[RMDB]
RNA sequence: GGGAACGACUCGAGUAGAGUCGAAAAUCGUCGACCGUCGUCGAGGUCGAGCAGACCGGCGACACCGGCGUCGUGGUCAACGUCGACACCGACGGCGAUCGGUCCGUCAACAAGUGGGUGCUCGUCGACGGCGACUGGCGAUGGUCGUGCGACACGCAUUUACAACUUAUUUCGAUAAGUUGUAAAUAAAAGAAACAACAACAACAAC
Reactivity to 2A3 in 0.01 (KOAc 150mM, MgCl2 10mM, bicine 150mM(pH8.5), 24C), signal-to-noise 9, nucleotides 027 to 156: u020c000g010u000c000g000a040c010c000g010u010c000g000u020c130g300a100g080g030u030c010g000a030g050c040a020g030a070c050c000g040g020c020g010a010c020a040c050c050g130g030c050g010u010c010g030u080g020g060u070c050a070a040c050g060u060c030g040a040c020a040c070c050g030a010c000g000g020c020g040a040u050c010g010g020u050c030c010g010u020c020a080a120c030a220a110g110u230g090g060g020u070g030c050u040c060g010u000c010g010a030c000g010g020c010g000a010c030u060g000g010c000g010a010u020g020g010u020c030g050u100g050c010g020a020c020a010c110g080c020
Reactivity to DMS in 0.01 (KOAc 150mM, MgCl2 10mM, bicine 150mM(pH8.5), 24C), signal-to-noise 3, nucleotides 027 to 156: u010c030g040u000c040g000a030c010c010g020u000c000g000u000c030g020a110g030g020u000c010g000a180g020c080a180g000a050c010c010g020g020c000g000a060c060a170c040c080g010g020c030g000u000c020g040u000g030g030u000c030a080a070c080g010u010c000g000a100c030a120c040c030g000a060c000g020g000c030g000a030u000c060g000g000u010c010c010g010u000c020a120a150c080a090a130g030u010g030g030g030u010g010c040u010c050g020u000c010g020a040c020g010g010c010g000a060c010u000g010g010c010g010a070u010g000g020u000c020g000u010g010c000g000a110c040a100c080g020c100

Annotation: An RNA of 207 nucleotides, treated with 2A3 and DMS and read out base by base. DMS (dimethyl sulfate) methylates the pairing face of unpaired adenines and cytosines. For DMS, 13,745 sequencing reads were counted. The reactions ran in a buffer of 150 mM KOAc, 10 mM MgCl2 and 150 mM bicine (pH 8.5), at 24 C.